[RMDB]
RNA sequence: GGGAACGACUCGAGUAGAGUCGAAAACCCUGUACUCGCAAUCCGCUCUAGCAGGCCGAAUCCCUUCUCGAGGUUCGUUUACUUCAAGGUCUGCCUUAAAUAAGUGGUGUUGACGUCUGGGUCCUGCGCAAUGGGAAUUCAUGAACCAUGUCAGGUCGAUUGAAAGAGUCUUCGGACUCUUUCAAUCAAAAGAAACAACAACAACAAC
Reactivity to 2A3 in 0.01 (KOAc 150mM, MgCl2 10mM, bicine 150mM(pH8.5), 24C), signal-to-noise 2, nucleotides 027 to 156: c010c010c040u070g090u090a070c050u030c000g000c040a030a120u000c020c020g010c050u040c030u070a030g050c020a000g000g000c000c000g060a100a080u070c070c000c010u120u110c070u050c140g010a070g000g050u150u050c020g000u030u160u140a130c040u050u160c100a110a010g000g030u010c000u010g020c000c000u130u120a080a150a060u090a090a030g020u010g010g000u000g020u060u140g030a070c060g010u000c020u070g010g000g000u000c030c000u060g020c130g000c150a180a200u010g010g000g070a000a120u190u170c020a070u250g040a030a000c000c000a030u050g040u030c000a000g000g080u100c090
Reactivity to DMS in 0.01 (KOAc 150mM, MgCl2 10mM, bicine 150mM(pH8.5), 24C), signal-to-noise 1, nucleotides 027 to 156: c020c010c020u030g020u000a000c020u000c070g020c050a070a100u010c020c050g040c020u000c030u010a050g030c000a040g020g000c000c030g000a110a070u030c000c000c000u010u000c130u000c060g000a100g030g010u010u010c140g020u010u020u000a040c040u000u000c080a090a300g030g000u000c010u000g020c000c030u000u020a080a100a230u010a060a050g000u000g010g000u000g010u030u010g000a090c090g000u010c050u000g050g010g020u000c010c020u020g010c220g040c130a120a080u000g000g020g000a110a110u010u020c190a200u010g010a190a220c040c020a060u000g000u010c010a110g000g030u000c040
This 207-nucleotide RNA was probed chemically with 2A3 and DMS.
The DMS profile rests on 1,916 reads.
The reactions ran in a buffer of 150 mM KOAc, 10 mM MgCl2 and 150 mM bicine (pH 8.5), at 24 C.
Values are in units of 0.01, from 0 to 300, in steps of 10.